[RMDB]
RNA sequence: GGGAACGACUCGAGUAGAGUCGAAAAUGACGCCGGAAAAUCAGGCAAAGAUAUUGCCCUAUAUCUACCAGUGGACGGAAACGGCCGAAGGGCUUUCUGGCGAGGAAGCCUAUCUUGGUUUUGCCCACUCGAUUACUAAUUUCGAUUAGUAAUCGAGAAAAGAAACAACAACAACAAC
Reactivity to 2A3 in 0.01 (KOAc 150mM, MgCl2 10mM, bicine 150mM(pH8.5), 24C), signal-to-noise 4, nucleotides 027 to 126: u100g050a020c060g000c020c010g040g020a070a060a000a110u120c050a040g040g000c020a080a050a000g070a030u110a070u050u110g040c010c000c010u050a060u000a010u080c030u030a090c010c010a060g050u070g080g060a030c030g020g020a080a050a020c020g020g010c010c010g030a050a040g010g000g000c000u000u010u020c010u030g040g040c040g010a010g020g030a020a010g000c010c010u050a120u080c090u050u080g040g010u030u000u070u120g030c000c000c010a050
Reactivity to DMS in 0.01 (KOAc 150mM, MgCl2 10mM, bicine 150mM(pH8.5), 24C), signal-to-noise 8, nucleotides 027 to 126: u010g010a160c100g020c010c020g010g000a050a040a090a090u000c160a090g010g000c060a070a100a090g010a080u010a040u000u010g010c040c050c050u000a090u000a030u000c030u000a170c070c050a110g020u010g000g000a060c020g010g000a060a100a150c080g010g000c020c030g020a080a230g000g000g000c020u000u000u000c010u000g010g010c170g000a090g000g000a020a030g000c010c010u000a070u000c070u010u000g010g010u000u000u000u000g000c020c010c050a190
Source information: Chemical mapping of a 177-nucleotide RNA with 2A3 and DMS. The RNA was probed in 150 mM KOAc, 10 mM MgCl2 and 150 mM bicine (pH 8.5) at 24 C. Reactivities are given for positions 27 through 126.